[RMDB]
RNA sequence: GGGAACGACUCGAGUAGAGUCGAAAAUAAAUGCCAGCGGCUAAGCUUUAAGACAACCAGUCUAACGGAUUGACCGCUUUUCCUCUUUGUCUUAUUUCAAAGUAUAGACCGUUUUGCUUAAUUCCACGAACAUGGUUACAUUCGUGUAACCAUGUUCAAAAGAAACAACAACAACAAC
Reactivity to 2A3 in 0.01 (KOAc 150mM, MgCl2 10mM, bicine 150mM(pH8.5), 24C), signal-to-noise 6, nucleotides 027 to 126: u050a000a040a030u140g000c000c000a000g000c000g000g010c000u010a100a100g020c020u040u040u050a030a020g010a010c010a020a050c050c040a050g040u080c110u080a030a020c030g070g040a120u090u140g180a220c030c030g000c000u030u010u030u010c010c010u080c000u020u050u010g000u000c000u030u090a120u050u170u110c130a100a040a010g040u030a070u040a180g150a250c010c020g020u130u110u060u110g000c000u020u040a070a040u160u020c020c000a040c150
Reactivity to DMS in 0.01 (KOAc 150mM, MgCl2 10mM, bicine 150mM(pH8.5), 24C), signal-to-noise 5, nucleotides 027 to 126: u010a060a050a060u010g020c020c240a030g000c020g000g000c010u010a050a300g000c000u010u000u000a100a020g000a020c030a070a060c120c100a090g030u010c060u000a040a090c090g010g000a300u020u000g010a080c010c010g000c060u000u000u000u010c110c020u000c080u010u000u000g010u000c010u000u000a090u020u020u030c200a060a050a060g000u000a100u010a020g000a100c030c040g000u010u000u010u010g000c030u000u000a060a150u000u000c010c020a110c300